[RMDB]
RNA sequence: GGGAACGACUCGAGUAGAGUCGAAAAGGGGUCUUGUCAGUGGUGAACUUUGCUUGGAUUUAUUGGCUGAAGCCUCCACGGCCAAUUGUCAGCAAAGAACCACUUGGAUUUAGACGGAGGCACCCAAAACUUAUCAUGGCUUCGGCCAUGAUAAGAAGAUUUCCCCAAUCUUCGGAUUGGGGAAAUCAAAAGAAACAACAACAACAAC
Reactivity to 2A3 in 0.01 (KOAc 150mM, MgCl2 10mM, bicine 150mM(pH8.5), 24C), signal-to-noise 2, nucleotides 027 to 156: g050g010g000g000u000c010u050u090g000u010c010a010g010u000g040g030u040g110a140a090c000u040u000u000g000c010u060u090g160g030a190u300u190u240a060u000u270g000g010c000u030g030a220a100g050c000c060u000c030c040a000c020g020g000c000c000a000a060u050u060g070u070c070a000g000c000a000a040a040g020a070a020c040c050a010c000u030u130g060g020a050u030u160u250a010g000a000c030g030g010a010g020g000c020a190c060c000c000a020a080a020a020c000u000u020a000u000c000a000u000g010g000c000u040u050c220g100g000c030c000a000u000g000a000u010a000a000g000a000a020